[RMDB]
RNA sequence: GGGAACGACUCGAGUAGAGUCGAAAAUAUUUUUCAUACAGCGAAAGGCACAUGACUUCGAACAUUAUAGCAGUUAGUAGUUGCCUAAACCCAUUGCAAUAUAUGGGACAGUAGAGGUCGCAAGCCUAAAAGCUUCCGCCCUUCGGGGCGGAAGCAAGUCUUAAGAUCAGUUCGCUGAUCUUAAGACAAAAGAAACAACAACAACAAC
Reactivity to 2A3 in 0.01 (KOAc 150mM, MgCl2 10mM, bicine 150mM(pH8.5), 24C), signal-to-noise 1, nucleotides 027 to 156: u090a050u070u130u020u090u180c040a090u100a280c060a020g060c050g100a200a110a000g000g080c000a000c000a110u090g000a000c030u000u000c030g020a070a000c000a130u030u150a150u230a100g040c070a000g030u020u050a080g080u240a000g000u110u040g000c000c000u100a150a140a080c000c000c000a000u010u050g000c000a000a010u040a000u010a000u250g010g000g000a000c010a000g000u030a010g000a010g120g000u000c000g000c030a030a000g000c000c000u080a070a030a000a030g000c000u000u020c000c000g010c200c000c110u100u200c190g040g040g010g040c110g000g000a000a030g000c000a000a000